[RMDB]
RNA sequence: GGGAACGACUCGAGUAGAGUCGAAAAGGGUCUUGGUCCGCUGCAGGCGGUCGGCGAGCCAGUUCAGGUAGGCGGCCGAAAUCUUCCAGUUCGCCAGGAAGGGCACCCGGAACAGGGUCCGCACGCCACUAAGCUUAUGCUUCGGCAUAAGCUUAGUAAAAGAAACAACAACAACAAC
Reactivity to 2A3 in 0.01 (KOAc 150mM, MgCl2 10mM, bicine 150mM(pH8.5), 24C), signal-to-noise 5, nucleotides 027 to 126: g010g000g000u020c000u020u020g000g000u010c010c010g030c020u050g040c040a060g070g020c000g020g010u010c000g050g170c020g030a070g090c010c010a050g090u230u270c120a030g010g050u030a030g030g060c000g000g000c000c000g010a040a020a030u030c020u020u000c010c010a100g060u090u070c080g110c180c070a050g040g000a000a020g030g040g000c010a010c000c070c000g000g000a010a030c030a020g000g000g010u010c000c010g030c020a060c060g090c010c000
Reactivity to DMS in 0.01 (KOAc 150mM, MgCl2 10mM, bicine 150mM(pH8.5), 24C), signal-to-noise 4, nucleotides 027 to 126: g000g000g020u000c010u000u000g000g000u010c010c020g010c300u000g010c090a250g020g020c010g000g010u000c000g000g000c020g020a200g030c000c010a190g010u050u050c260a110g000g030u000a230g000g000c050g000g020c000c020g020a040a090a090u050c000u000u000c010c020a100g010u020u030c100g000c080c100a190g000g000a010a000g010g020g060c050a020c200c140c000g000g030a050a020c020a070g020g000g010u000c000c010g010c080a080c140g000c060c060
Record summary: Structure probing data (2A3 and DMS) for a 177-nucleotide construct.